Chemical mapping of a 207-nucleotide RNA with DMS and 2A3. The reactions ran in a buffer of 150 mM KOAc, 10 mM MgCl2 and 150 mM bicine (pH 8.5), at 24 C. 2A3 adducts were read by reverse transcription with SuperScript II with manganese. DMS adducts were read by reverse transcription with MarathonRT. The 2A3 profile rests on 666 reads.
RNA sequence: GGGAACGACUCGAGUAGAGUCGAAAACAAAACAGAAAUAUGUUAACAAUACUGCGACUUUGUUAAUGACCAGUUUGCAAUAUGCACCUAGAGAAUUGCUGCAAUAUAUUACCAUGGUAAACUCUUUGACAUAUUUUGAGGAACCCAAUUACGACGACGCUAUAGAGUUUUUCGAAACUCUAUAGCGAAAAGAAACAACAACAACAAC
Reactivity to DMS in 0.01 (KOAc 150mM, MgCl2 10mM, bicine 150mM(pH8.5), 24C), signal-to-noise 1, nucleotides 027 to 156: c060a070a090a080a300c050a280g000a030a040a100u010a020u010g010u000u000a090a140c040a070a080u010a060c060u000g080c130g000a130c040u000u030u010g040u020u000a080a130u000g010a140c060c090a100g020u000u000u010g110c000a030a020u010a060u010g030c080a080c040c040u000a040g000a120g020a080a120u000u000g030c010u000g000c020a110a060u010a130u000a040u010u000a060c110c040a110u000g010g020u000a060a060a070c060u000c030u000u000u010g020a050c000a010u000a030u030u000u000u000g000a070g020g010a070a130c030c000c010a080a090u000u000a080c060g000a160c050g060a170
Reactivity to 2A3 in 0.01 (KOAc 150mM, MgCl2 10mM, bicine 150mM(pH8.5), 24C), signal-to-noise 1, nucleotides 027 to 156: c000a000a040a040a030c030a030g130a050a070a040u210a060u110g010u030u110a050a040c040a160a000u090a090c010u070g050c040g070a030c050u100u060u080g020u010u130a080a020u080g090a050c030c020a030g020u000u070u150g030c000a040a050u060a040u170g040c050a050c040c040u070a010g010a010g010a230a090u140u060g020c020u020g010c010a090a090u070a010u050a040u180u080a020c080c030a060u060g000g000u030a060a070a000c010u010c000u030u020u070g010a030c010a010u050a000u040u060u010u070g040a020g040g050a040a050c020c000c000a040a140u110u040a090c140g000a020c000g020a010

Reactivities are given for positions 27 through 156.